[RMDB]
RNA sequence: GGGAACGACUCGAGUAGAGUCGAAAAGAAACACCAGCGCCCAGGAAGAAAAACGUGAACGUGAACUACUUGACGAAACACGAACGCUGGUGUAAAUCGUCAAGAAGCAGAAAGAAAAGAAAGAAAAACUAGGGUACCUAUUCGUAGGUACCCUAGUAAAAGAAACAACAACAACAAC
Reactivity to DMS in 0.01 (KOAc 150mM, MgCl2 10mM, bicine 150mM(pH8.5), 24C), signal-to-noise 2, nucleotides 027 to 126: g000a150a150a070c010a040c020c000a040g000c000g010c100c010c050a100g050g010a070a060g000a030a100a100a110a100c100g020u000g000a080a220c090g000u010g010a030a040c100u030a130c040u010u000g000a000c000g000a070a150a070c060a020c020g010a080a120c010g010c040u000g020g000u000g000u010a050a100a060u000c000g000u000c000a000a000g000a260a040g010c130a090g000a060a030a070g000a070a000a100a050g010a050a040a140g030a080a010a020a100
Reactivity to 2A3 in 0.01 (KOAc 150mM, MgCl2 10mM, bicine 150mM(pH8.5), 24C), signal-to-noise 1, nucleotides 027 to 126: g000a000a040a000c000a000c020c000a000g000c000g000c000c010c010a010g080g000a000a030g110a000a160a000a000a000c000g090u090g100a000a010c090g000u120g100a000a120c010u200a050c000u030u000g000a000c010g020a040a040a000c000a000c000g000a180a000c010g040c000u000g000g000u000g000u010a000a000a000u050c000g040u040c000a020a020g000a130a000g110c050a010g210a120a300a140g130a080a270a060a000g230a000a040a050g140a020a180a000a000
The record gives the reactivity of an RNA of 177 nucleotides to DMS and 2A3.
The 2A3 profile rests on 485 reads.
The RNA was probed in 150 mM KOAc, 10 mM MgCl2 and 150 mM bicine (pH 8.5) at 24 C.